[RMDB]
RNA sequence: GGGAACGACUCGAGUAGAGUCGAAAAAACGUUGCAUGAUCGUAUAACAUGCCCGGCUUACCGUGAGCCGCCUUUGAAAGAAAGGUUUACACGGACUCUGUUGCGUUACGCACGUACCUAACUUGUGAAAACGGCAUCUUGUUCGCAAGAUGCCGAACCAGGUUUAAAGCUUCGGCUUUAAACCUGGAAAAGAAACAACAACAACAAC
Reactivity to 2A3 in 0.01 (KOAc 150mM, MgCl2 10mM, bicine 150mM(pH8.5), 24C), signal-to-noise 2, nucleotides 027 to 156: a000a000c000g000u000u010g000c000a000u000g000a010u220c020g010u260a080u050a030a000c000a000u010g000c000c010c010g000g010c000u020u060a110c030c000g010u000g000a000g000c000c030g010c000c000u040u000u000g060a150a030a000g040a000a030a000g030g000u000u050u050a000c000a000c000g000g040a050c030u150c060u160g110u140u020g030c040g010u040u100a020c180g020c020a030c010g030u040a030c010c030u030a110a240c030u060u090g060u040g190a020a050a040a050c000g000g000c000a000u000c000u010u000g020u060u000c040g010c080a000a000g000a000u000g000c000c000g000a000a000
Background
Chemical mapping of a 207-nucleotide RNA with 2A3. Values are in units of 0.01, from 0 to 300, in steps of 10. It was measured as part of the RMDB library M2RFOK. Reactivities are given for positions 27 through 156.